[RMDB]
RNA sequence: GGGAACGACUCGAGUAGAGUCGAAAAGAUCUUACGAUAUUGUUAGCGUAGUGUUUAUAGCUGAUUGGGUUUACCUGAAGCAACUGACCAGCACUCCGUGUUUGGAAACAGUCAAGGGAGAAAACACAUUGAUUAGUUGGUAAGUUAACUCUGUACCCGGCAAACAUGUAUUCGUACAUGUUUGCCGAAAAGAAACAACAACAACAAC
Reactivity to 2A3 in 0.01 (KOAc 150mM, MgCl2 10mM, bicine 150mM(pH8.5), 24C), signal-to-noise 1, nucleotides 027 to 156: g020a070u040c010u130u040a020c050g040a130u030a100u170u000g080u170u040a000g010c040g110u050a080g000u080g070u150u090u000a000u140a010g030c050u060g050a160u160u090g060g060g060u100u180u120a110c010c010u060g090a110a040g010c020a000a040c080u020g090a280c000c010a000g020c000a000c010u110c090c290g010u010g050u030u200u200g010g030a100a060a080c000a000g040u000c070a060a000g000g000g060a110g130a010a030a010a000c060a020c050a090u060u270g030a080u110u000a020g000u010u120g060g000u000a020a020g010u030u080a020a050c070u040c000u030g100u140a090c000c000